The data come from the RNA Mapping Database (RMDB), library M2RFPK. The record gives the reactivity of an RNA of 207 nucleotides to 2A3 and DMS. The reactions ran in a buffer of 150 mM KOAc, 10 mM MgCl2 and 150 mM bicine (pH 8.5), at 24 C. High DMS reactivity at an A or C suggests that its Watson-Crick edge is free. For DMS the reverse transcriptase was MarathonRT.
RNA sequence: GGGAACGACUCGAGUAGAGUCGAAAAACGCUUCACAAUGUGCGGCAAAGAAACAUUGUUUCUGCAAAGGCACUUCGCAAUGUGUGCUCAAACAUUGCUUAUUCAAACACGCUUCACAAUGUGCGACAAAACUUCACGGUCUUCGGACCGUGAAGAACAAGAAAGUUCUCUUCGGAGAACUUUCUUGAAAAGAAACAACAACAACAAC
Reactivity to 2A3 in 0.01 (KOAc 150mM, MgCl2 10mM, bicine 150mM(pH8.5), 24C), signal-to-noise 3, nucleotides 027 to 156: a000c000g010c030u020u010c010a000c000a000a010u000g020u000g000c000g070g020c090a120a090a020g080a020a040a000c020a040u030u000g080u020u100u050c060u140g080c030a090a070a080g150g000c000a000c000u030u020c030g000c010a000a040u010g020u000g010u010g010c110u110c180a040a020a000c000a020u020u000g010c000u090u110a190u120u080c090a050a100a030c070a020c050g040c030u110u120c090a020c010a160a190u140g020u050g090c040g050a050c060a020a120a040a060c020u000u000c000a000c000g000g000u000c000u040u070c100g130g000a000c000c000g020u000g000a010a000g000a000a000
Reactivity to DMS in 0.01 (KOAc 150mM, MgCl2 10mM, bicine 150mM(pH8.5), 24C), signal-to-noise 1, nucleotides 027 to 156: a030c040g030c030u000u000c030a070c020a040a060u000g030u010g010c060g000g080c060a120a030a080g000a080a010a010c010a070u000u010g010u000u000u000c080u000g000c030a080a230a050g000g000c010a060c050u000u000c100g060c110a110a040u000g000u000g030u000g000c080u030c000a070a140a030c030a050u000u000g010c060u000u000a010u010u000c000a030a110a150c050a050c080g030c060u000u000c080a100c120a070a050u000g000u000g000c060g040a220c060a080a060a020a120c010u000u000c000a020c000g020g000u000c010u020u000c300g060g030a040c020c010g000u030g000a000a000g000a080a100